[RMDB]
RNA sequence: GGGAACGACUCGAGUAGAGUCGAAAAGUCACGCUCAGGUAUUGCUUGUUGCCUUAGUGUGCUUAAGUCCUCGAAGAAUAACUGCUGACCUUAUUCACUGGCUGUGUGGACUUUCUGGCACAGUCAGGAUAUUGUACGUGUUCGCACGUACAAUAUCAAAAGAAACAACAACAACAAC
Reactivity to DMS in 0.01 (KOAc 150mM, MgCl2 10mM, bicine 150mM(pH8.5), 24C), signal-to-noise 8, nucleotides 027 to 126: g010u020c010a010c020g010c010u000c070a020g000g010u000a040u020u020g010c180u010u020g010u000u000g010c010c000u000u000a020g020u000g010u000g010c020u000u010a080a110g000u000c000c010u010c170g020a120a090g010a050a040u010a040a050c090u000g000c060u000g000a070c060c080u000u010a030u010u010c050a300c010u000g000g000c000u000g010u000g020u000g010g000a140c190u000u020u030c070u000g010g010c000a020c030a020g010u000c010a020g000
Reactivity to 2A3 in 0.01 (KOAc 150mM, MgCl2 10mM, bicine 150mM(pH8.5), 24C), signal-to-noise 9, nucleotides 027 to 126: g070u090c010a000c000g000c010u010c010a000g010g010u050a090u090u280g160c190u130u210g090u140u070g050c000c000u000u000a000g000u000g000u010g010c000u030u030a070a010g040u000c010c000u020c060g110a130a080g030a070a050u090a090a030c050u100g020c040u070g090a080c010c020u060u060a060u090u070c030a020c040u010g000g000c000u000g000u000g010u030g060g020a050c040u080u190u040c090u140g130g000c010a010c000a050g000u010c000a000g000